[RMDB]
RNA sequence: GGGAACGACUCGAGUAGAGUCGAAAAGAUAUGGAUCGGGAGAGGGUCGUAACAUCACUCGGAAACGAGUGUGGACCUACCCACCUCCCAUCCUAAGUCAAAAGUGGGAAGGUUCGCCUUCCCACAACAGAGGUAUACUGUUCGCAGUAUACCUCUGAAAAGAAACAACAACAACAAC
Reactivity to DMS in 0.01 (KOAc 150mM, MgCl2 10mM, bicine 150mM(pH8.5), 24C), signal-to-noise 8, nucleotides 027 to 126: g000a060u010a300u000g000g000a010u000c160g030g000g010a030g030a300g000g000g010u010c210g000u000a070a170c060a030u020c010a010c000u000c000g010g000a110a120a170c010g000a010g020u000g030u000g010g010a160c300c040u010a040c020c010c010a130c150c000u000c000c000c000a040u010c000c010u000a040a140g000u010c030a070a040a100a140g010u010g000g000g000a020a020g010g010u000u010c250g010c000c010u010u000c000c000c000a000c010a010a100
Reactivity to 2A3 in 0.01 (KOAc 150mM, MgCl2 10mM, bicine 150mM(pH8.5), 24C), signal-to-noise 5, nucleotides 027 to 126: g030a000u070a040u170g020g000a010u050c250g010g000g000a010g000a030g010g010g010u010c030g010u020a070a040c020a040u290c040a000c010u000c010g040g000a060a060a040c010g010a000g000u010g000u010g000g030a030c010c010u020a020c010c000c010a190c010c020u000c020c000c000a000u000c000c000u010a080a040g070u050c050a050a030a080a130g000u000g000g000g000a000a020g010g030u070u250c250g190c000c000u000u000c000c000c000a000c000a000a000

Source: RMDB library TTRDEL, as collected in RNAgym. Chemical mapping of a 177-nucleotide RNA with DMS and 2A3. The RNA was probed in 150 mM KOAc, 10 mM MgCl2 and 150 mM bicine (pH 8.5) at 24 C. The 2A3 profile rests on 18,127 reads. For DMS the reverse transcriptase was MarathonRT.